[RMDB]
RNA sequence: GGGAACGACUCGAGUAGAGUCGAAAACUACGAGGCCACACCUCAGAGCUCUGUGGAGAUGAGGCUGAUGACCACCAUGGGCAUGAACAUGGCCGUGUUUAUGCUGGGGAAGCUCCUGGGAGGACAGGGCCAUAUCUUAGUUCGCUAAGAUAUGGCCAAAAGAAACAACAACAACAAC
Reactivity to 2A3 in 0.01 (KOAc 150mM, MgCl2 10mM, bicine 150mM(pH8.5), 24C), signal-to-noise 2, nucleotides 027 to 126: c050u090a050c070g120a040g000g020c020c000a050c000a010c010c000u030c000a000g030a050g090c030u050c030u110g200u220g150g040a050g000a070u060g010a030g060g000c060u060g060a170u040g100a090c010c030a040c000c030a100u110g050g030g030c020a020u050g020a010a000c010a020u030g220g000c010c110g020u030g010u010u090u020a060u020g000c010u040g000g020g010g050a040a010g000c000u020c040c040u030g070g020g020a070g020g070a020c030a070g120
Reactivity to DMS in 0.01 (KOAc 150mM, MgCl2 10mM, bicine 150mM(pH8.5), 24C), signal-to-noise 2, nucleotides 027 to 126: c050u000a070c160g010a150g000g020c030c040a100c130a180c030c010u000c020a110g020a140g020c000u000c020u000g040u010g060g010a060g020a090u000g020a040g010g010c150u000g030a110u000g000a050c030c060a180c090c040a100u000g000g000g020c020a050u000g010a030a020c050a030u000g000g000c170c110g000u000g020u000u000u000a030u000g000c040u000g010g000g020g020a170a080g000c050u010c020c040u000g000g000g020a090g000g000a090c090a060g000

Structure probing data (2A3 and DMS) for a 177-nucleotide construct. Values are in units of 0.01, from 0 to 300, in steps of 10. The reactions ran in a buffer of 150 mM KOAc, 10 mM MgCl2 and 150 mM bicine (pH 8.5), at 24 C.